[RMDB]
RNA sequence: GGGAACGACUCGAGUAGAGUCGAAAAUGUCACAAAUAUAGUCCUGUCUUAACCUGGCCCAGUUCUAGCUGCAAGGCCAGGCUGCUAUGGGAACUGGGGGCUUCCGGGAGGGCCUUGGGGACUGCCCAUUGUCCUCAGUGUUCGCACUGAGGACAAUAAAAGAAACAACAACAACAAC
Reactivity to 2A3 in 0.01 (KOAc 150mM, MgCl2 10mM, bicine 150mM(pH8.5), 24C), signal-to-noise 1, nucleotides 027 to 126: u080g030u060c020a010c040a120a260a050u160a060u100a150g040u030c010c030u070g040u080c050u060u070a070a050c010c000u000g030g000c010c030c000a010g000u170u050c050u030a070g050c030u060g000c050a040a140g070g000c010c020a000g010g010c030u020g000c020u030a030u070g000g020g060a110a020c070u000g000g000g040g050g090c010u220u040c090c040g050g030g040a080g000g020g020c000c120u020u020g000g000g060g000a010c000u040g000c000c000c010
Reactivity to DMS in 0.01 (KOAc 150mM, MgCl2 10mM, bicine 150mM(pH8.5), 24C), signal-to-noise 1, nucleotides 027 to 126: u000g020u010c110a080c110a050a080a100u010a110u010a080g020u020c000c000u010g000u000c060u000u000a060a120c030c020u000g010g000c010c000c040a010g000u000u010c170u010a080g010c060u000g020c160a100a200g020g020c010c030a010g000g000c010u000g010c030u000a040u000g020g000g000a040a060c030u000g020g020g000g000g000c100u000u020c050c080g000g000g000a160g000g010g000c020c110u020u000g070g000g010g000a130c070u000g000c010c010c020
This 177-nucleotide RNA was probed chemically with 2A3 and DMS. The data come from the RNA Mapping Database (RMDB), library OK2TST. For DMS, 1,283 sequencing reads were counted. Conditions: 150 mM KOAc, 10 mM MgCl2 and 150 mM bicine (pH 8.5), 24 C. Values cover nucleotides 27 to 126.